[RMDB]
RNA sequence: GGGAACGACUCGAGUAGAGUCGAAAAGGGAUGGGAUCCGAAGCCCCAUUGAGGGAUAAUCCAGGCUCUCCCAUCCAACUCCUAUUCCAACACGUCCUCGUCGUACAGAGUGGUAACAUGUGUCACCUAUACUAAUGACCGUUCGCGGUCAUUAGAAGUUCUGGAGAGAGUUCGCUCUCUCCAGAACAAAAGAAACAACAACAACAAC
Reactivity to 2A3 in 0.01 (KOAc 150mM, MgCl2 10mM, bicine 150mM(pH8.5), 24C), signal-to-noise 1, nucleotides 027 to 156: g020g000g000a010u010g010g000g030a030u180c010c010g010a060a030g070c020c020c020c030a140u160u290g070a300g010g010g000a010u110a060a070u170c010c100a040g000g010c060u000c000u000c000c000c000a000u000c000c000a000a000c010u020c000c000u000a100u060u030c130c060a150a000c020a010c030g040u050c030c000u030c010g080u020c010g010u120a080c030a050g070a050g080u070g000g050u050a020a000c030a100u200g020u010g030u060c000a040c010c000u100a010u080a300c060u000a050a000u000g000a010c010c010g040u010u000c240g010c000g120g000u000c010a000u000u000a000g000a000a010

Structure probing data (2A3) for a 207-nucleotide construct.
Conditions: 150 mM KOAc, 10 mM MgCl2 and 150 mM bicine (pH 8.5), 24 C.
Source: RMDB library M2RFPK, as collected in RNAgym.
Values cover nucleotides 27 to 156.